[RMDB]
RNA sequence: GGGAACGACUCGAGUAGAGUCGAAAAAGGCAAUGUCUCAACCAAUGGGGGUUGAACUAUUGGAAAUAACACCCAAGUUGCUUAGGUGCCAGGACUAACUUCUUGUUUACCAAGGUUUCAACGCAGAGAACAACAAGAGUUUCGACUCUUGUUGUUCAAAAGAAACAACAACAACAAC
Reactivity to DMS in 0.01 (KOAc 150mM, MgCl2 10mM, bicine 150mM(pH8.5), 24C), signal-to-noise 4, nucleotides 027 to 126: a120g020g000c030a030a040u010g000u000c130u000c030a070a080c030c030a180a140u020g000g020g020g030g030u000u000g000a040a050c010u010a040u010u000g000g010a070a090a050u000a090a080c160a100c040c030c010a080a090g000u000u000g000c080u000u010a080g000g020u000g020c230c020a040g000g000a060c150u010a040a060c140u000u000c030u000u000g010u000u020u000a080c060c010a020a080g000g000u000u000u000c050a020a100c140g000c160a140g000a210
Reactivity to 2A3 in 0.01 (KOAc 150mM, MgCl2 10mM, bicine 150mM(pH8.5), 24C), signal-to-noise 2, nucleotides 027 to 126: a000g120g020c040a060a000u070g040u020c000u020c090a000a030c000c000a010a060u270g100g040g030g040g000u030u020g010a000a020c020u190a130u110u040g020g020a090a070a040u090a020a020c040a170c040c020c010a000a050g130u100u080g040c070u080u080a040g000g060u040g090c040c010a020g060g010a010c030u070a030a040c010u050u050c010u030u100g050u050u030u040a020c010c010a030a020g060g000u020u100u140c050a060a040c040g040c150a030g050a010
An RNA of 177 nucleotides, treated with DMS and 2A3 and read out base by base. Source: RMDB library OK2TRN, as collected in RNAgym. 2A3 adducts were read by reverse transcription with SuperScript II with manganese. DMS adducts were read by reverse transcription with MarathonRT. Conditions: 150 mM KOAc, 10 mM MgCl2 and 150 mM bicine (pH 8.5), 24 C.